This 177-nucleotide RNA was probed chemically with 2A3 and DMS. The reactions ran in a buffer of 150 mM KOAc, 10 mM MgCl2 and 150 mM bicine (pH 8.5), at 24 C. The DMS profile rests on 1,285 reads. For DMS the reverse transcriptase was MarathonRT.
[RMDB]
RNA sequence: GGGAACGACUCGAGUAGAGUCGAAAAGAUAUGGAUCGUACUGCUCAUCGAUCAUGUGGAUCGGAAACGAUCCCAUGGGAGAGCUUUACGAUCCUAAGUCAAAGGACUAAUCUUCGGAUUAGUCCAACACGUUACCGAUCUUCGGAUCGGUAACGUGAAAAGAAACAACAACAACAAC
Reactivity to 2A3 in 0.01 (KOAc 150mM, MgCl2 10mM, bicine 150mM(pH8.5), 24C), signal-to-noise 1, nucleotides 027 to 126: g020a000u010a030u080g000g000a000u000c000g000u000a000c010u000g000c000u000c030a300u300c100g080a060u010c030a000u020g210u300g000g010a010u030c000g040g010a030a070a010c000g000a000u000c010c000c010a000u010g000g040g030a120g020a000g000c000u010u010u000a010c000g000a000u030c000c000u010a000a000g020u000c050a060a180a110g010g000a020c020u030a000a000u040c050u080u200c300g100g000a000u000u040a000g000u040c000c000a000a000
Reactivity to DMS in 0.01 (KOAc 150mM, MgCl2 10mM, bicine 150mM(pH8.5), 24C), signal-to-noise 1, nucleotides 027 to 126: g010a050u000a260u020g000g000a000u000c000g010u000a030c020u000g020c000u000c000a300u000c130g000a050u010c010a000u000g000u020g050g010a010u000c010g010g000a010a080a080c010g000a000u000c000c000c000a010u000g000g000g000a030g000a010g000c000u000u000u000a020c010g000a000u000c000c000u000a020a100g020u000c000a140a130a240g010g010a000c000u000a000a000u000c000u000u010c270g050g000a030u000u000a010g020u000c000c000a030a090